[RMDB]
RNA sequence: GGGAACGACUCGAGUAGAGUCGAAAACCCGUCGUGUUCGCACGACGGGAACUACCGACAAUGGAGCUCGGUAUAAAACUCCAACCCUUGGAAACAAGGGAACAAUCGCCACUUUCGAGUGGCGAAAUAUUAAACAGUCUUUCGAGACUGUUUAAUAAAAAGAAACAACAACAACAAC
Reactivity to 2A3 in 0.01 (KOAc 150mM, MgCl2 10mM, bicine 150mM(pH8.5), 24C), signal-to-noise 5, nucleotides 027 to 126: c000c000c010g000u000c000g000u030g050u040u080c220g020c070a000c000g010a000c000g000g000g000a020a010c010u010a010c010c000g020a010c040a120a280u190g080g020a040g020c050u010c020g020g000u030a070u070a270a090a010a010c010u020c010c000a080a100c010c000c000u000u000g000g030a020a050a040c000a010a000g010g000g010a010a000c010a000a070u030c010g000c010c000a020c010u070u110u130c240g110a010g000u000g000g020c000g010a000a000a000
Reactivity to DMS in 0.01 (KOAc 150mM, MgCl2 10mM, bicine 150mM(pH8.5), 24C), signal-to-noise 4, nucleotides 027 to 126: c000c000c000g020u000c000g030u000g010u010u010c220g040c000a010c010g010a010c000g020g000g010a010a040c060u000a060c010c000g010a120c180a120a190u010g010g000a020g020c080u000c010g000g000u000a070u000a010a070a030a040c020u000c000c000a020a230c000c010c000u000u010g010g000a150a110a200c010a000a000g000g000g010a080a020c200a110a140u000c000g010c000c000a000c000u000u000u010c170g010a010g020u000g010g010c010g000a000a010a040